This 177-nucleotide RNA was probed chemically with 2A3 and DMS. In probing experiments dimethyl sulfate is read out at A N1 and C N3, which are open when not base-paired. The data come from the RNA Mapping Database (RMDB), libraries RFM100 and RFMREP.
RNA sequence: GGGAACGACUCGAGUAGAGUCGAAAAGGUGUCGUGGAAGGCACGCGUAGGCCGAGUGUGAGUGGGUGCGCAAGUGGGUGCGCGAAUGCGCGGGGCGUGCGAGGUGAGUGUGUGCGCCCGCCCCUGCAGCAAGAUAAGUGUUCGCACUUAUCUUGCUAAAAGAAACAACAACAACAAC
Reactivity to 2A3 in 0.01 (KOAc 150mM, MgCl2 10mM, bicine 150mM(pH8.5), 24C), signal-to-noise 7, nucleotides 027 to 126: g060g010u040g030u090c050g030u070g110g060a120a100g070g000c030a010c030g050c010g030u060a060g000g080c020c020g030a040g040u090g000u010g020a080g040u070g010g030g010u070g000c040g000c010a030a050g030u080g050g060g030u050g010c030g000c020g040a140a070u180g010c030g000c040g010g000g000g000c010g000u010g000c010g010a050g040g070u170g050a160g040u140g000u030g010u040g030c000g000c010c010c000g010c000c000c000c000u020g010c020
Reactivity to DMS in 0.01 (KOAc 150mM, MgCl2 10mM, bicine 150mM(pH8.5), 24C), signal-to-noise 5, nucleotides 027 to 126: g010g030u010g000u010c050g030u020g010g020a120a090g010g010c020a050c060g040c120g010u010a060g000g010c030c040g000a080g020u010g010u000g010a090g030u010g010g010g010u010g010c070g010c070a040a070g000u000g010g010g020u000g010c020g000c040g000a090a040u020g010c030g010c040g000g010g020g010c020g020u000g000c010g000a050g010g020u010g010a110g010u010g020u010g020u030g010c020g000c010c020c010g010c010c000c000c010u000g020c080